Description:
The record gives the reactivity of an RNA of 177 nucleotides to DMS. Source: RMDB library OK2TRN, as collected in RNAgym. The reactions ran in a buffer of 150 mM KOAc, 10 mM MgCl2 and 150 mM bicine (pH 8.5), at 24 C. Values cover nucleotides 27 to 126. DMS adducts were read by reverse transcription with MarathonRT.
RNA sequence: GGGAACGACUCGAGUAGAGUCGAAAAUCCAUAUGGAAAUUCUGGCAUUUGGUACAAGCAUUUUCUUGGAGUUUAUGUAGCAAGAUUAGCAAAGCCCAUCCCACCCAUUGACUCUUGACCCAAGAUAUAACUACCCUAGGUUCGCCUAGGGUAGUUAAAAAGAAACAACAACAACAAC
Reactivity to DMS in 0.01 (KOAc 150mM, MgCl2 10mM, bicine 150mM(pH8.5), 24C), signal-to-noise 1, nucleotides 027 to 126: u000c000c020a110u010a110u000g010g000a130a070a110u000u010c030u010g020g030c090a060u010u000u010g000g000u000a060c110a130a090g020c140a050u010u010u000u010c020u000u030g000g000a100g000u020u010u020a030u030g000u000a080g000c020a040a110g010a070u010u000a050g010c040a070a100a080g020c030c020c000a110u000c040c020c020a130c070c040c020a090u000u010g000a050c040u000c030u000u000g000a130c030c000c020a110a070g000a070u000a060